This 207-nucleotide RNA was probed chemically with 2A3 and DMS.
For 2A3 the reverse transcriptase was SuperScript II with manganese.
The RNA was probed in 150 mM KOAc, 10 mM MgCl2 and 150 mM bicine (pH 8.5) at 24 C.
Values cover nucleotides 27 to 156.
For 2A3, 2,439 sequencing reads were counted.
For DMS, 3,356 sequencing reads were counted.
High 2A3 reactivity points to a flexible backbone, as in loops and unpaired stretches.
[RMDB]
RNA sequence: GGGAACGACUCGAGUAGAGUCGAAAAUCACCAGAUGCUGCAUCACCUGAUCACUGAUGGCUCAACGGUAUCCGGCGGUACAAGUGAAUACUUGUAGCUGCCUUUUGAGCGGGUUGGCUGCAAUCCGAAAAGAGGACACACUUCGGUGUGUCCUCAAUCCAUUAGCAACGUUCGCGUUGCUAAUGGAAAAAGAAACAACAACAACAAC
Reactivity to 2A3 in 0.01 (KOAc 150mM, MgCl2 10mM, bicine 150mM(pH8.5), 24C), signal-to-noise 3, nucleotides 027 to 156: u050c010a020c020c000a000g010a030u040g030c020u020g010c010a040u030c010a020c030c020u020g020a040u050c040a020c040u070g030a040u060g140g000c020u020c090a030a040c070g060g020u080a050u050c060c050g000g000c000g020g020u040a020c010a030a020g010u050g200a190a160u200a250c020u010u000g000u020a040g130c020u010g000c000c000u060u040u020u030g050a030g010c050g000g020g000u070u080g060g060c070u090g070c050a010a020u010c010c010g030a010a000a020a090g000a000g000g000a000c000a000c000a000c020u040u090c230g040g000u000g000u000g020u000c000c000u000c000a000a000
Reactivity to DMS in 0.01 (KOAc 150mM, MgCl2 10mM, bicine 150mM(pH8.5), 24C), signal-to-noise 2, nucleotides 027 to 156: u000c050a060c000c000a000g030a030u000g020c000u000g010c040a140u000c130a070c010c040u000g040a150u000c100a160c200u020g010a080u000g000g110c030u020c040a060a130c040g020g020u010a050u000c030c010g020g030c000g010g000u000a030c050a030a050g030u000g000a180a200u030a060c020u000u000g000u000a030g030c030u030g000c000c020u010u000u010u030g000a050g010c050g020g010g000u000u000g010g010c080u010g000c000a060a180u000c030c000g000a060a050a130a200g000a020g000g010a010c000a020c000a020c020u000u010c270g070g020u000g020u000g010u000c000c020u000c000a020a040